[RMDB]
Chemical mapping of a 207-nucleotide RNA with DMS.
RNA sequence: GGGAACGACUCGAGUAGAGUCGAAAAUCCUAAGUCUUGUUACAAGAGUCUACGUAUUGUAAGAACCGUGGUGGGAGCGUGUGGGUCGGAAACGACCCUCAACGCGAAGAACACCACUCAGUAUUACAAUACGUAGACUCUUGUAACAAGAUAUGGACUAUAAACAUGUCUUCGGACAUGUUUAUAGAAAAGAAACAACAACAACAAC
Reactivity to DMS in 0.01 (KOAc 150mM, MgCl2 10mM, bicine 150mM(pH8.5), 24C), signal-to-noise 2, nucleotides 027 to 156: u000c000c010u020a050a230g010u000c000u000u000g020u000u000a030c000a040a010g030a050g020u010c000u000a000c010g000u000a030u010u000g010u000a030a020g020a130a190c280c300g020u000g010g070u000g030g000g020a260g010c020g000u000g000u010g010g030g030u010c010g000g000a080a090a260c000g020a030c000c000c000u000c020a070a010c020g030c010g000a030a080g020a140a170c020a030c000c000a020c020u000c020a060g000u000a080u000u000a020c020a040a000u000a000c000g000u000a000g010a000c010u000c000u000u000g000u000a010a010c000a010a010g010a010u010a060u000g020g010a300